[RMDB]
An RNA of 207 nucleotides, treated with 2A3 and DMS and read out base by base.
It was measured as part of the RMDB library OK3TST.
Reactivities are given for positions 27 through 156.
For DMS the reverse transcriptase was MarathonRT.

RNA sequence: GGGAACGACUCGAGUAGAGUCGAAAAAAGAUAAGUAGUAAAACCAGGUUUAUGUACUCAUUCACUUGCUUCAUUCAUCAACUAUUUAUGGAGUCUGUGGUAUGUGCCAGGAAUCGUUUUAGACACUCAAGAUAUAGCCGUGAAUAUGCCAGAGAAAACUUUCGACUAUUUUCGAAUAGUCGAAAGUAAAAGAAACAACAACAACAAC
Reactivity to 2A3 in 0.01 (KOAc 150mM, MgCl2 10mM, bicine 150mM(pH8.5), 24C), signal-to-noise 4, nucleotides 027 to 156: a000a000g090a050u160a040a050g040u100a010g010u050a030a030a020a040c050c020a040g040g000u020u070u030a050u080g040u030a070c030u030c090a030u090u030c010a010c020u000u030g030c000u030u030c010a020u090u000c010a060u070c030a090a140c050u130a120u210u120u040a020u070g050g000a020g020u000c020u060g000u020g020g020u080a020u060g060u050g010c020c020a020g000g060a030a020u060c030g010u000u040u080u090a020g020a010c030a010c040u070c050a020a010g050a050u060a010u040a120g010c020c020g020u030g020a010a020u130a040u090g030c040c010a010g060a090g090a080a300a010
Reactivity to DMS in 0.01 (KOAc 150mM, MgCl2 10mM, bicine 150mM(pH8.5), 24C), signal-to-noise 2, nucleotides 027 to 156: a070a050g020a130u000a080a080g000u000a120g020u000a050a020a070a120c020c070a100g040g000u000u000u000a010u010g030u000a060c050u010c030a030u010u000c030a060c030u010u000g010c030u000u010c020a040u010u000c070a030u000c060a130a110c140u000a150u000u000u000a040u000g040g010a100g020u000c080u010g050u010g010g020u010a060u000g020u000g020c040c040a100g020g060a040a080u000c030g010u000u000u000u030a130g010a060c050a040c010u000c050a070a140g000a140u000a060u010a050g020c020c020g030u000g030a060a070u010a060u010g030c010c030a100g030a180g000a060a100a060